[RMDB]
RNA sequence: GGGAACGACUCGAGUAGAGUCGAAAAGGUGCGACGCCAGAUGGCAUCAUCGAGUUCAACAACCCACUCUUUUUCAACCAGAUAGCGCAAUUCUGCUUCAUACAGACCGUGGCCGAAGUGUUCGCCCGCGGAUAGUAUCAUUCGUGAUACUAUCCGCAAAAGAAACAACAACAACAAC
Reactivity to DMS in 0.01 (KOAc 150mM, MgCl2 10mM, bicine 150mM(pH8.5), 24C), signal-to-noise 3, nucleotides 027 to 126: g010g030u000g000c070g030a100c090g000c020c020a120g000a110u000g000g020c030a100u020c070a120u000c050g020a070g010u000u000c090a080a100c090a080a120c030c010c010a080c100u000c030u010u000u000u000u000c110a100a130c080c060a090g000a130u010a030g020c050g000c100a070a090u000u010c060u000g000c060u010u010c140a080u010a110c100a060g000a060c140c040g010u000g010g000c050c010g000a080a080g010u000g000u000u000c030g000c030c030c050
Reactivity to 2A3 in 0.01 (KOAc 150mM, MgCl2 10mM, bicine 150mM(pH8.5), 24C), signal-to-noise 3, nucleotides 027 to 126: g050g010u060g000c060g060a030c060g010c030c000a060g030a180u190g030g000c030a050u040c000a010u060c110g040a030g070u080u110c040a060a060c000a040a050c060c000c030a060c040u080c060u050u160u010u040u080c070a080a070c020c010a050g030a190u070a050g030c020g000c040a060a080u110u010c010u080g040c000u040u060c040a040u060a160c050a020g070a070c010c020g050u060g050g030c010c010g060a060a020g030u030g010u050u040c030g020c050c030c000